[RMDB]
RNA sequence: GGGAACGACUCGAGUAGAGUCGAAAACUUCUUCUUUACCUUCUUCUGGCUCUUCCGAUGAGACGCGACCGGUGGCAUCACCUCUCGGUUCGUCCCAACCUGCUUUUUGUCUAUCUGAGCCUCUGCCGCGAUCCUCUCUUGAGCCCCUCUGGGGAAUCAGAUUUCAAUAGUUCGCUAUUGAAAUCUGAAAAGAAACAACAACAACAAC
Reactivity to 2A3 in 0.01 (KOAc 150mM, MgCl2 10mM, bicine 150mM(pH8.5), 24C), signal-to-noise 4, nucleotides 027 to 156: c010u100u070c020u100u040c010u110u200u110a160c010c010u060u070c000u070u050c040u100g060g010c010u020c030u120u030c070c040g090a120u100g030a040g010a060c040g020c060g040a020c010c020g030g010u030g030g000c050a130u080c050a080c030c010u000c030u060c010g000g000u040u040c020g010u010c000c000c010a060a080c030c030u090g020c090u100u120u010u090u200g070u050c030u050a170u010c040u060g050a010g000c000c010u030c020u050g030c030c010g040c010g070a100u040c020c030u020c010u030c040u070u110g070a080g030c010c010c020c010u110c100u130g010g000g030g000a000a010u030